This 177-nucleotide RNA was probed chemically with 2A3 and DMS. 2A3 adducts were read by reverse transcription with SuperScript II with manganese. The RNA was probed in 150 mM KOAc, 10 mM MgCl2 and 150 mM bicine (pH 8.5) at 24 C.
[RMDB]
RNA sequence: GGGAACGACUCGAGUAGAGUCGAAAAUUGAUGGUGUACUCCCAGUCGGAGUCGCCGUCCCCCAGCACCUGGGCGCCGAAGUACUCGCCGUCGGCCAUCACGUCGAGCACGGUCUGGUCGCCGUACUUUAUUCUAGUGAUUUCGAUCACUAGAAUAAAAAAGAAACAACAACAACAAC
Reactivity to 2A3 in 0.01 (KOAc 150mM, MgCl2 10mM, bicine 150mM(pH8.5), 24C), signal-to-noise 9, nucleotides 027 to 126: u130u130g000a010u020g000g020u010g040u120a020c010u010c000c020c020a030g200u180c100g020g000a010g000u000c000g000c000c000g000u010c020c000c000c000c000a020g070c050a060c030c050u120g050g010g000c020g000c010c010g020a050a010g020u040a040c000u010c020g030c020c010g030u060c060g060g030c060c010a090u160c020a000c020g030u020c010g010a010g020c040a010c030g030g090u020c080u130g050g010u090c040g000c010c000g010u060a070c030u010
Reactivity to DMS in 0.01 (KOAc 150mM, MgCl2 10mM, bicine 150mM(pH8.5), 24C), signal-to-noise 8, nucleotides 027 to 126: u020u020g010a010u000g010g020u000g000u080a020c010u000c000c010c200a210g010u060c220g000g000a010g010u000c010g000c010c000g010u000c000c040c010c010c010a140g000c120a110c040c030u010g010g010g010c030g020c030c020g000a070a100g010u000a070c020u000c020g010c060c010g000u010c100g010g000c060c070a050u020c060a070c020g020u000c020g010a050g020c040a040c030g010g000u010c060u040g000g010u020c020g020c000c010g000u010a040c120u000
Reactivities are given for positions 27 through 126. Source: RMDB libraries RFM100 and RFMREP, as collected in RNAgym.